[RMDB]
RNA sequence: GGGAACGACUCGAGUAGAGUCGAAAACAUAAGAGCCUCAGCACCAAUCUAGAUGUAACUAACUCGAUCGAGCAUCAGGUCAAGGACGUGCUGACACCACUCUUCAAGAUCAUUGGUGAUGAAGUGGGAGAGCUUUGCGGUUCGCCGCAAAGCUCUCAAAAGAAACAACAACAACAAC
Reactivity to 2A3 in 0.01 (KOAc 150mM, MgCl2 10mM, bicine 150mM(pH8.5), 24C), signal-to-noise 2, nucleotides 027 to 126: c060a140u300a170a110g060a000g130c040c000u040c000a000g140c000a000c150c000a000a150u050c040u070a070g010a030u090g000u010a030a080c040u000a010a000c000u090c190g130a260u040c130g050a060g070c010a000u010c010a010g000g040u010c040a040a160g060g000a190c090g040u120g000c020u020g000a000c000a000c000c000a000c010u060c190u040u050c080a140a010g000a280u060c000a060u050u250g000g090u110g000a090u070g120a220a060g020u010g000g220

Chemical mapping of a 177-nucleotide RNA with 2A3. Reactivities are rounded to 0.1 and cut off at 0 and 3. 2A3 adducts were read by reverse transcription with SuperScript II with manganese. The reactions ran in a buffer of 150 mM KOAc, 10 mM MgCl2 and 150 mM bicine (pH 8.5), at 24 C.